[RMDB]
RNA sequence: GGGAACGACUCGAGUAGAGUCGAAAACUAGAAGGUCAACGCAGGGAGGCUGACCUGCGUAAUACAGUUCAGGAACUUGCCGGCCAGCUCGCGGAUAUGCAGGUUGCCCCUGUGCGAGCAGAAACUCGGCUCAUACUCCAUUCGUGGAGUAUGAGCCAAAAGAAACAACAACAACAAC
Reactivity to 2A3 in 0.01 (KOAc 150mM, MgCl2 10mM, bicine 150mM(pH8.5), 24C), signal-to-noise 2, nucleotides 027 to 126: c040u060a070g100a150a090g140g000u070c020a070a020c010g000c000a000g030g010g070a090g150g100c070u070g090a110c010c010u000g000c000g070u050a000a040u190a080c070a060g030u080u170c050a010g120g000a090a100c010u050u080g010c000c020g000g040c000c010a020g000c000u000c000g040c000g000g100a160u090a000u300g030c000a000g050g000u110u100g060c050c000c000c000u030g040u030g000c000g000a030g000c030a000g030a010a100a070c070u090c050
Reactivity to DMS in 0.01 (KOAc 150mM, MgCl2 10mM, bicine 150mM(pH8.5), 24C), signal-to-noise 1, nucleotides 027 to 126: c060u000a090g040a020a020g000g000u000c050a220a080c140g000c020a000g000g000g060a210g030g000c020u050g000a060c000c000u030g000c000g070u000a060a070u000a070c090a090g010u000u000c060a150g000g000a100a190c060u000u000g040c040c200g000g000c020c000a090g050c000u000c000g000c000g050g000a070u040a080u030g000c020a150g000g020u000u010g020c120c110c000c000u050g000u020g040c140g020a020g000c000a030g020a100a120a020c090u000c140